[RMDB]
RNA sequence: GGGAACGACUCGAGUAGAGUCGAAAAAACGCCACUGUCUGACAUAAUUCCGGCGUCACAUACAAGAGACGUGUUCUCGGAUGCCCAGAAAGGAGAUCGUCUAUAAUAAGCCGUCUCUCAGCUAGAGGAGUCGUCGAGUUGAUGGUGGAUACUGCUAGUCGCACACCACGUUCGCGUGGUGUGCGACAAAAGAAACAACAACAACAAC
Reactivity to 2A3 in 0.01 (KOAc 150mM, MgCl2 10mM, bicine 150mM(pH8.5), 24C), signal-to-noise 1, nucleotides 027 to 156: a000a000c110g000c000c000a000c000u040g000u020c010u110g030a110c050a250u120a110a130u160u020c090c000g000g070c000g030u020c000a060c000a060u300a040c060a070a010g030a000g000a000c040g110u140g000u230u040c110u040c040g020g030a030u090g090c000c000c040a030g170a040a060a070g000g000a060g000a100u120c000g050u000c080u030a100u070a160a050u110a150a000g000c000c000g000u000c020u000c000u010c060a040g070c130u070a090g030a040g210g060a010g090u150c030g000u080c050g060a000g070u000u110g040a000u030g000g020u000g000g000a000u060a150c000u050g060c120u160a040
Description: The data come from the RNA Mapping Database (RMDB), library OK3TST. The record gives the reactivity of an RNA of 207 nucleotides to 2A3. The 2A3 profile rests on 348 reads. For 2A3 the reverse transcriptase was SuperScript II with manganese.